[RMDB]
RNA sequence: GGGAACGACUCGAGUAGAGUCGAAAAAAUUGCCAUAAAAGGCACAAUCACACUUGCGAUUUUAGAGAUGCGUUGUACACCGCCCAACGUAAUUGCUGCCACAAUAAGUGUCAAAACAACAGUUGUGGUUACAUCCGUACUUCGGUACGGAUGUAACAAAAGAAACAACAACAACAAC
Reactivity to DMS in 0.01 (KOAc 150mM, MgCl2 10mM, bicine 150mM(pH8.5), 24C), signal-to-noise 2, nucleotides 027 to 126: a090a050u010u000g000c040c020a030u000a070a050a060a040g000g000c010a030c280a110a060u000c070a030c110a060c030u010u000g020c030g000a040u000u010u050u000a110g010a190g000a070u000g010c050g000u000u000g000u030a070c030a150c090c020g030c070c090c010a050a050c030g050u040a030a040u000u000g000c120u010g010c040c030a020c020a010a060u000a030a100g050u000g010u000c200a040a010a060a040c070a070a050c120a110g020u000u000g010u000g010
Reactivity to 2A3 in 0.01 (KOAc 150mM, MgCl2 10mM, bicine 150mM(pH8.5), 24C), signal-to-noise 2, nucleotides 027 to 126: a000a030u160u110g000c070c000a090u240a110a140a000a000g020g020c010a010c010a020a050u080c030a010c000a000c070u060u070g070c010g110a150u060u100u060u150a130g000a030g010a080u020g030c020g010u000u070g040u080a050c070a010c050c020g020c000c000c010a000a020c000g030u040a020a020u050u070g030c030u030g000c030c020a030c040a030a080u140a130a030g030u000g050u160c120a090a100a010a110c030a020a000c030a070g010u000u000g010u000g000